[RMDB]
RNA sequence: GGGAACGACUCGAGUAGAGUCGAAAAGACGAACGGACGGAGUCUAUUAUAAACGGUGAGAAGAGCAUUCCUUCUUCUUUUUAAGACUUUUGAUUUAGAUUUUACAAUCAACUAGCACCGAAUAUGGCGUACGAAAAUGAUUCGUCAUUUUCGUACGAAAAGAAACAACAACAACAAC
Reactivity to 2A3 in 0.01 (KOAc 150mM, MgCl2 10mM, bicine 150mM(pH8.5), 24C), signal-to-noise 9, nucleotides 027 to 126: g060a010c050g020a150a020c070g040g140a010c060g030g020a030g040u000c020u060a140u150u120a090u140a070a080a020c030g000g020u030g020a020g010a020a010g010a010g030c090a190u160u070c030c000u010u030c000u020u020c000u040u070u020u070u140a060a020g020a040c000u020u030u030u050g030a030u020u050u080a130g060a230u090u150u100u190a080c090a030a010u010c000a010a030c050u050a020g010c000a000c010c000g030a050a010u170a110u150g110g010
Reactivity to DMS in 0.01 (KOAc 150mM, MgCl2 10mM, bicine 150mM(pH8.5), 24C), signal-to-noise 5, nucleotides 027 to 126: g020a050c030g010a110a100c100g030g020a090c080g020g030a120g010u000c030u010a120u020u010a040u020a020a050a260c030g000g010u000g010a030g000a030a020g010a100g000c150a160u030u020c090c010u000u010c010u010u000c000u000u010u030u020u070a040a070g000a030c020u010u000u010u000g000a020u000u000u000a110g010a170u030u040u030u010a080c180a000a010u000c000a010a010c150u000a020g000c010a020c010c000g000a050a140u030a020u010g000g000
Conditions: 150 mM KOAc, 10 mM MgCl2 and 150 mM bicine (pH 8.5), 24 C. Structure probing data (2A3 and DMS) for a 177-nucleotide construct. For 2A3 the reverse transcriptase was SuperScript II with manganese.